[RMDB]
Structure probing data (2A3) for a 207-nucleotide construct. Conditions: 150 mM KOAc, 10 mM MgCl2 and 150 mM bicine (pH 8.5), 24 C. 2A3 is a SHAPE reagent: it acylates the 2'-hydroxyl of flexible nucleotides of all four kinds. It was measured as part of the RMDB library M2RFPK. For 2A3, 863 sequencing reads were counted.
RNA sequence: GGGAACGACUCGAGUAGAGUCGAAAAGUAGUUAUGCUGAAAAUCGUUGAGGUUGUAUGGAAUAGGUUAACCGUAAGACCUUAAGUUGAAAAACUUUAAAACUAAUCUCAGGUAAAUUACUUUGAGUAAAACCUUCGUCGUUUCGACGACGAAGGAAGUCAAGUACUAGCUUCGGCUAGUACUUGACAAAAGAAACAACAACAACAAC
Reactivity to 2A3 in 0.01 (KOAc 150mM, MgCl2 10mM, bicine 150mM(pH8.5), 24C), signal-to-noise 2, nucleotides 027 to 156: g020u030a000g000u040u030a080u280g080c010u020g040a050a030a070a140u120c110g010u050u050g000a040g010g030u050u020g060u090a070u100g040g060a130a140u080a140g090g080u150u110a050a050c000c000g030u010a020a050g020a010c000c000u020u020a000a000g020u010u000g010a150a030a010a010a000c020u000u080u080a110a140a040a040c000u050a020a110u060c060u000c060a000g040g020u080a070a130a150u070u030a030c000u130u100u080g020a050g020u100a020a040a030a110c010c000u000u000c000g000u000c000g010u000u000u190c220g050a000c000g000a000c000g000a010a000g010g000a000a000